[RMDB]
RNA sequence: GGGAACGACUCGAGUAGAGUCGAAAAUGCUGCCUCCCGUAGGAGUCUGGGCCGUGUCUCAGUCCCAGUGUGGCUGAUCAUCCUCUCGGACCAGCUACUGAUCAUCGCCUUGGUAAGCUAUUGCCUCCAUCGUAAUACUCUUCGGAGUAUUACGAUGAAAAGAAACAACAACAACAAC
Reactivity to 2A3 in 0.01 (KOAc 150mM, MgCl2 10mM, bicine 150mM(pH8.5), 24C), signal-to-noise 6, nucleotides 027 to 126: u090g000c010u040g020c000c010u000c020c020c020g020u060a040g020g070a040g020u050c030u040g010g000g010c030c030g090u060g060u050c020u020c050a060g050u070c010c020c020a100g070u110g060u130g150g000c000u010g010a040u070c040a060u030c020c040u070c030u040c080g030g000a040c020c010a000g020c000u030a070c000u030g040a080u090c030a030u050c040g040c010c020u010u040g040g000u060a090a050g010c050u090a090u060u190g050c000c000u030c020
Reactivity to DMS in 0.01 (KOAc 150mM, MgCl2 10mM, bicine 150mM(pH8.5), 24C), signal-to-noise 6, nucleotides 027 to 126: u000g010c020u000g010c040c010u000c010c010c050g010u010a060g020g010a070g010u000c020u010g010g000g020c040c050g010u000g000u010c070u000c040a090g010u000c010c020c060a150g010u010g020u000g010g010c020u010g000a040u000c080a100u000c080c070u010c060u000c070g010g000a040c030c010a030g010c020u000a040c020u000g000a110u000c070a070u000c070g000c050c030u000u000g010g010u000a050a090g010c040u000a090u000u000g000c030c010u000c120